[RMDB]
RNA sequence: GGGAACGACUCGAGUAGAGUCGAAAACACACAUGGGUGCGGCAGCAAUCCUGCCAUCCGGUGUUGUUUUUUGGCAGUCGCGCUGCGCUAACGCAACCGCUCCUGCUACAGCAGAAAACAGCUCUCAAUGAAUCCUUUCCUUCGGGAAAGGAUUCAUAAAAGAAACAACAACAACAAC
Reactivity to DMS in 0.01 (KOAc 150mM, MgCl2 10mM, bicine 150mM(pH8.5), 24C), signal-to-noise 3, nucleotides 027 to 126: c040a080c050a020c100a060u060g000g000g040u000g000c200g000g000c000a000g000c300a210a080u020c170c000u000g000c000c020a070u020c060c010g040g020u000g040u010u000g030u010u000u000u020u000u000g000g010c000a030g000u020c080g000c100g030c050u000g000c040g000c260u040a080a100c070g020c000a050a010c160c020g000c030u000c170c000u000g000c030u050a140c300a180g010c010a040g000a100a100a040a120c140a050g030c050u000c020u010c060a140
Reactivity to 2A3 in 0.01 (KOAc 150mM, MgCl2 10mM, bicine 150mM(pH8.5), 24C), signal-to-noise 3, nucleotides 027 to 126: c040a000c000a000c010a180u200g020g000g000u090g100c160g100g000c010a010g000c020a030a080u130c000c000u010g000c010c000a000u030c020c000g000g030u020g010u080u090g020u010u020u000u000u060u080g010g000c000a010g000u040c050g000c030g000c040u040g020c020g030c150u190a280a040c050g000c010a020a020c030c010g020c020u010c000c000u010g000c010u020a030c050a020g040c020a020g100a120a090a020a010c040a040g000c020u000c000u010c070a010

The data come from the RNA Mapping Database (RMDB), library RFM100. An RNA of 177 nucleotides, treated with DMS and 2A3 and read out base by base. High 2A3 reactivity points to a flexible backbone, as in loops and unpaired stretches. The reactions ran in a buffer of 150 mM KOAc, 10 mM MgCl2 and 150 mM bicine (pH 8.5), at 24 C. For 2A3, 1,599 sequencing reads were counted.